[RMDB]
RNA sequence: GGGAACGACUCGAGUAGAGUCGAAAAACUCACAUUUUUGUGUCUGUCUUCUUUCCUCUUCGGGACGACAAGGAAAUCCACCUCCUCGUGGUUCGUCCUGGGCGUUCGUAGAAGCAAUGCUUCCACGGUUAAUUUGACUGUUCGCAGUCAAAUUAACAAAAGAAACAACAACAACAAC
Reactivity to DMS in 0.01 (KOAc 150mM, MgCl2 10mM, bicine 150mM(pH8.5), 24C), signal-to-noise 2, nucleotides 027 to 126: a080c040u010c010a070c070a110u010u000u010u000u010g040u000g010u000c040u000g000u010c060u000u000c090u020u000u000c030c000u000c060u010u010c030g030g010g010a050c010g020a040c070a110a040g000g010a030a070a180u000c050c060a090c120c080u010c030c010u000c060g020u010g000g020u000u000c060g010u000c010c000u020g010g010g010c110g000u000u000c000g030u000a050g010a020a020g010c010a120a150u000g010c010u000u000c010c030a060c060g010
Reactivity to 2A3 in 0.01 (KOAc 150mM, MgCl2 10mM, bicine 150mM(pH8.5), 24C), signal-to-noise 1, nucleotides 027 to 126: a010c060u160c020a060c000a090u130u120u120u110u160g050u000g020u000c040u060g050u040c020u070u000c010u050u110u030c020c000u000c000u110u090c000g030g000g000a010c020g020a020c040a070a070g070g050a030a040a060u080c040c020a040c060c030u080c010c000u040c070g130u050g080g040u040u050c000g000u050c000c000u010g070g000g000c040g020u100u130c040g000u080a010g020a000a000g000c080a150a290u290g000c030u010u030c000c010a030c060g040
Background: An RNA of 177 nucleotides, treated with DMS and 2A3 and read out base by base. The 2A3 profile rests on 1,376 reads. The reactions ran in a buffer of 150 mM KOAc, 10 mM MgCl2 and 150 mM bicine (pH 8.5), at 24 C. It was measured as part of the RMDB library VIROID. For DMS the reverse transcriptase was MarathonRT.